This 207-nucleotide RNA was probed chemically with 2A3 and DMS. The DMS profile rests on 1,970 reads. Conditions: 150 mM KOAc, 10 mM MgCl2 and 150 mM bicine (pH 8.5), 24 C. The 2A3 profile rests on 935 reads. DMS adducts were read by reverse transcription with MarathonRT. 2A3 adducts were read by reverse transcription with SuperScript II with manganese. Reactivities are given for positions 27 through 156.
RNA sequence: GGGAACGACUCGAGUAGAGUCGAAAAGACAAGAUCUCCUUCUCUCCAACGUUGUUGCCAACUCAUGAUUCUCCUAACCUGUGCUUGGAGAGACGUGGACCCCGAGUCAGAGGACCUCUGACUUCCAAAAACCCGUUUCGGUUCGCCGAAACGGGAAGACAUGAUGAUUGUUCGCAAUCAUCAUGUCAAAAGAAACAACAACAACAAC
Reactivity to 2A3 in 0.01 (KOAc 150mM, MgCl2 10mM, bicine 150mM(pH8.5), 24C), signal-to-noise 2, nucleotides 027 to 156: g080a000c090a040a120g080a300u030c030u010c010c000u040u010c000u000c000u040c010c000a060a030c080g030u000u050g000u040u040g070c040c060a100a020c110u050c150a090u130g120a220u170u030c090u090c140c030u060a110a140c010c050u090g070u170g080c060u050u000g000g010a000g010a010g020a000c040g030u040g010g010a030c000c020c010c010g010a010g010u000c000a000g000a000g100g080a100c010c040u000c000u000g020a020c000u000u060c060c000a050a090a060a110a110c000c000c000g000u000u010u000c000g000g040u060u040c160g050c090c000g000a000a000a000c000g010g000g000a000a000
Reactivity to DMS in 0.01 (KOAc 150mM, MgCl2 10mM, bicine 150mM(pH8.5), 24C), signal-to-noise 1, nucleotides 027 to 156: g000a150c070a090a070g010a300u020c010u010c000c000u000u000c020u000c020u010c010c010a060a130c060g040u020u000g000u000u010g000c000c040a100a130c030u000c060a100u030g030a150u000u000c060u010c040c010u010a020a090c060c050u010g010u020g020c060u020u000g010g020a080g010a040g010a040c040g020u010g000g020a130c010c000c000c020g030a020g030u010c010a030g000a070g060g010a110c210c010u000c010u000g000a020c010u020u000c000c000a010a300a060a110a160c000c000c000g030u010u010u000c010g010g020u000u010c300g030c020c040g000a020a000a010c000g010g000g010a010a030